The record gives the reactivity of an RNA of 177 nucleotides to DMS and 2A3. The 2A3 profile rests on 4,147 reads. For DMS the reverse transcriptase was MarathonRT. 2A3 adducts were read by reverse transcription with SuperScript II with manganese. It was measured as part of the RMDB library OK2TST. The reactions ran in a buffer of 150 mM KOAc, 10 mM MgCl2 and 150 mM bicine (pH 8.5), at 24 C.
RNA sequence: GGGAACGACUCGAGUAGAGUCGAAAAGAUAGCAUGUGUCUGAGUACACACACACACACACACACACAUCACAUACAUUCACACUUACAUGUUUGAAUUAAAAAGUGUGUUACUCAGAUAAGUCUAAGCUGUUAUAUGCAUUCGUGCAUAUAACAGCAAAAGAAACAACAACAACAAC
Reactivity to DMS in 0.01 (KOAc 150mM, MgCl2 10mM, bicine 150mM(pH8.5), 24C), signal-to-noise 2, nucleotides 027 to 126: g040a160u010a060g000c070a080u010g020u000g020u000c000u000g000a020g000u000a020c070a020c010a000c030a060c040a060c090a050c020a020c060a010c070a020c030a010c040a050c070a050u000c040a020c080a060u000a050c140a020u000u000c020a000c050a030c050u000u040a110c160a050u020g000u000u000u030g010a060a030u010u000a020a060a050a140a090g020u000g010u000g020u000u010a020c000u000c000a020g010a100u000a050a080g000u010c010u020a060a200
Reactivity to 2A3 in 0.01 (KOAc 150mM, MgCl2 10mM, bicine 150mM(pH8.5), 24C), signal-to-noise 3, nucleotides 027 to 126: g060a030u170a030g030c090a050u190g080u030g000u090c000u010g000a000g030u030a000c000a000c030a010c000a010c000a010c000a000c000a010c000a000c000a010c000a000c010a010c010a050u040c050a070c010a040u160a040c010a040u050u080c020a010c000a020c050u080u210a050c050a110u090g060u050u060u070g080a090a060u070u110a080a070a050a070a070g010u010g010u000g000u030u020a000c000u000c000a000g000a020u020a010a000g020u010c020u020a040a040